[RMDB]
RNA sequence: GGGAACGACUCGAGUAGAGUCGAAAAUUGUGGGUAUUGAGGGUCCGGAUGGCAAACUUAGUCAGUGGCCAGCGAGGAUUGUGGCCACGGAUGCCUCGCAUGACUUGGCAGUGCUGCAGAUCGAUGCAUGAUACGCGUGAUUCGUCACGCGUAUCAUAAAAGAAACAACAACAACAAC
Reactivity to 2A3 in 0.01 (KOAc 150mM, MgCl2 10mM, bicine 150mM(pH8.5), 24C), signal-to-noise 2, nucleotides 027 to 126: u140u020g070u080g050g060g060u110a090u140u150g030a040g000g000g010u040c060c060g110g000a050u060g040g000c090a070a140a070c120u060u130a030g160u050c040a030g010u040g010g000c060c010a010g030c080g120a070g160g110a060u080u260g020u040g040g000c000c010a010c000g000g020a030u080g110c010c000u000c000g000c020a060u170g020a090c020u010u070g040g000c000a020g030u060g050c010u020g000c000a020g020a120u130c140g000a060u100g020c010
Reactivity to DMS in 0.01 (KOAc 150mM, MgCl2 10mM, bicine 150mM(pH8.5), 24C), signal-to-noise 2, nucleotides 027 to 126: u010u010g010u000g020g010g020u010a080u000u000g000a100g010g000g020u010c050c040g010g010a100u010g000g010c040a050a080a110c160u010u010a090g020u000c070a070g020u010g010g020c000c010a080g010c090g010a100g000g000a100u000u020g030u000g010g000c000c010a090c000g010g010a050u000g000c020c000u000c050g010c080a060u000g010a070c030u000u000g000g010c050a040g010u010g020c060u000g020c040a040g000a070u010c090g010a090u000g020c140